[RMDB]
RNA sequence: GGGAACGACUCGAGUAGAGUCGAAAAGAUAUGGAACAUAUCGGAGGACGCCACAUCGGAAACGAUGUGGAGGUCCGCCGGUGAAAUACGAGUAUGUUCCUAAGUCAAACGCAGCUUCGGCUGCGAAUCAGCUAUAUCUGUUCGCAGAUAUAGCUGAAAAAGAAACAACAACAACAAC
Reactivity to 2A3 in 0.01 (KOAc 150mM, MgCl2 10mM, bicine 150mM(pH8.5), 24C), signal-to-noise 4, nucleotides 027 to 126: g030a020u110a040u180g030g010a010a010c010a030u060a020u130c010g000g010a020g030g010a000c010g020c020c000a000c000a000u000c000g000g050a090a050a020c010g000a010u000g010u010g000g010a010g020g000u000c000c000g000c000c000g080g020u140g110a150a200a040u300a090c050g010a040g170u080a050u070g000u020u000c000c000u020a120a020g040u020c040a100a030a110c020g000c000a000g000c000u110u140c270g180g000c000u000g010c000g000a000a070
Reactivity to DMS in 0.01 (KOAc 150mM, MgCl2 10mM, bicine 150mM(pH8.5), 24C), signal-to-noise 5, nucleotides 027 to 126: g010a050u000a300u010g000g010a040a030c030a030u000a000u000c000g000g000a040g020g000a020c000g010c000c000a000c000a010u000c000g000g010a120a100a170c000g000a010u000g010u000g000g000a010g020g010u000c000c000g000c030c010g010g020u000g000a090a070a110u010a080c150g010a110g010u000a020u000g000u000u000c000c000u010a050a170g010u000c050a060a110a200c020g000c000a000g010c000u000u010c220g030g000c000u000g000c000g000a030a040
This 177-nucleotide RNA was probed chemically with 2A3 and DMS. 2A3 adducts were read by reverse transcription with SuperScript II with manganese. For 2A3, 9,766 sequencing reads were counted. It was measured as part of the RMDB library TTRDEL.